[RMDB]
RNA sequence: GGGAACGACUCGAGUAGAGUCGAAAAUAGCUUAGUAAUCAUGAUCGACGGAAUCUGAUCAGAGAUUUUGUCGAUUUGAGUCUACGCUAAGCUCACAUGAGACGAUAGCGUAGACUAUCCGUCUCAAGAUAGUAUUCUGAUUCGUCGGGAUGCUAUCAAAAGAAACAACAACAACAAC
Reactivity to 2A3 in 0.01 (KOAc 150mM, MgCl2 10mM, bicine 150mM(pH8.5), 24C), signal-to-noise 2, nucleotides 027 to 126: u140a010g030c000u020u030a030g060u300a300a300u140c110a060u300g100a040u050c000g010a010c010g000g030a030a000u010c010u020g300a110u190c090a170g000a010g000a300u000u000u000u060g040u010c000g020a000u000u000u060g000a000g060u180c280u220a080c270g010c000u000a000a050g010c000u000c010a110c030a020u000g010a000g000a000c010g000a050u000a000g080c300g270u250a080g080a100c020u040a000u060c170c070g040u020c000u020c000a000a070